[RMDB]
RNA sequence: GGGAACGACUCGAGUAGAGUCGAAAAAAUGUUGUACGCGUCACGCAUGGUUUGAGCACCACGGCGACUGACGGCGUUAUACGUGGGGUGUUCUCCCAAAUUAUGUCUCACUUACUUGUCGGAAGUAUAACCUUGGGCGAUUCGUCGCCCAAGGUUAAAAAGAAACAACAACAACAAC
Reactivity to DMS in 0.01 (KOAc 150mM, MgCl2 10mM, bicine 150mM(pH8.5), 24C), signal-to-noise 1, nucleotides 027 to 126: a010a020u000g020u000u000g020u000a020c000g000c010g030u000c010a050c030g000c000a190u030g020g020u000u030u010g010a190g010c230a110c000c000a030c140g000g000c030g030a110c250u000g030a010c000g000g040c030g000u000u000a050u010a060c060g000u000g070g000g000g020u030g010u000u000c090u010c010c000c050a040a070a090u000u000a100u000g030u010c020u000c070a060c140u000u000a060c060u010u010g010u050c130g000g020a050a080g000u000a070